[RMDB]
RNA sequence: GGGAACGACUCGAGUAGAGUCGAAAAGUGACAGCAGGCUCAUAAGACGCCCCAGCGUCGCCAUAGUGCGUUCACCGAAUACGUGCGCAACAACCGUCUUCCGGAGACUGUCAUACGCGUAAAACAGCGUAUCUCGUCUGUUCGCAGACGAGAUACGAAAAGAAACAACAACAACAAC
Reactivity to DMS in 0.01 (KOAc 150mM, MgCl2 10mM, bicine 150mM(pH8.5), 24C), signal-to-noise 1, nucleotides 027 to 126: g050u000g000a030c040a040g000c050a060g010g000c050u000c040a080u000a020a050g000a070c020g020c030c010c050c070a200g020c040g040u000c010g030c070c090a140u000a050g000u020g010c030g000u000u000c040a110c080c030g010a090a050u020a050c160g000u000g000c030g000c010a110a040c160a050a050c030c020g000u000c020u000u000c070c130g010g020a090g000a090c000u010g000u000c040a050u030a050c060g010c090g020u050a010a030a070a070c200a080g000
Reactivity to 2A3 in 0.01 (KOAc 150mM, MgCl2 10mM, bicine 150mM(pH8.5), 24C), signal-to-noise 1, nucleotides 027 to 126: g030u000g020a000c020a000g010c000a000g000g080c000u000c070a080u010a110a020g030a010c010g010c000c000c000c000a000g030c010g040u060c020g030c010c000a220u110a110g090u070g120c020g030u120u230c070a050c120c000g040a050a050u180a100c070g020u080g010c000g000c010a030a030c050a040a030c010c000g020u000c030u090u000c080c090g050g010a040g010a060c010u000g030u030c010a000u100a110c090g000c030g130u160a030a050a050a120c030a030g070

This 177-nucleotide RNA was probed chemically with DMS and 2A3. Reactivities are given for positions 27 through 126. The data come from the RNA Mapping Database (RMDB), library OK2TST.